[RMDB]
RNA sequence: GGGAACGACUCGAGUAGAGUCGAAAAGAUAUGGACAAGAACUACGUUCUUGAGCUCAACAGCUCUCAAGCGUCGGAAACGACGCUUGAGAGACAUGAGCAAAUGAGGAACGCUUGUCCUAAGUCGAGAAAUAUUAUUGCUUCGGCAAUAAUAUUUCAAAAGAAACAACAACAACAAC
Reactivity to DMS in 0.01 (KOAc 150mM, MgCl2 10mM, bicine 150mM(pH8.5), 24C), signal-to-noise 2, nucleotides 027 to 126: g010a020u010a300u010g000g010a000c000a000a020g000a120a070c190u010a300c050g010u000u010c000u000u000g010a260g020c000u000c000a010a070c300a240g000c000u000c000u000c000a010a000g030c000g010u000c010g040g000a050a030a190c020g030a000c000g000c000u010u000g000a000g000a000g020a010c070a160u000g000a010g010c010a090a050a180u010g000a080g010g010a040a010c020g000c000u000u010g000u000c000c010u000a020a070g000u000c030g000a180
Reactivity to 2A3 in 0.01 (KOAc 150mM, MgCl2 10mM, bicine 150mM(pH8.5), 24C), signal-to-noise 2, nucleotides 027 to 126: g030a000u070a060u100g010g000a000c010a020a030g020a190a160c240u240a050c300g020u020u020c000u100u180g160a040g040c000u000c010a050a140c090a300g170c000u010c000u000c010a000a000g050c000g000u010c010g020g000a020a000a060c010g020a020c040g000c020u000u020g000a000g010a010g010a000c000a060u010g000a000g000c020a010a120a190u300g120a110g010g020a000a010c000g010c000u000u000g010u000c000c020u020a030a000g010u010c010g000a020
Chemical mapping of a 177-nucleotide RNA with DMS and 2A3. Conditions: 150 mM KOAc, 10 mM MgCl2 and 150 mM bicine (pH 8.5), 24 C. 2A3 adducts were read by reverse transcription with SuperScript II with manganese. For DMS, 2,046 sequencing reads were counted. 2A3 is a SHAPE reagent: it acylates the 2'-hydroxyl of flexible nucleotides of all four kinds.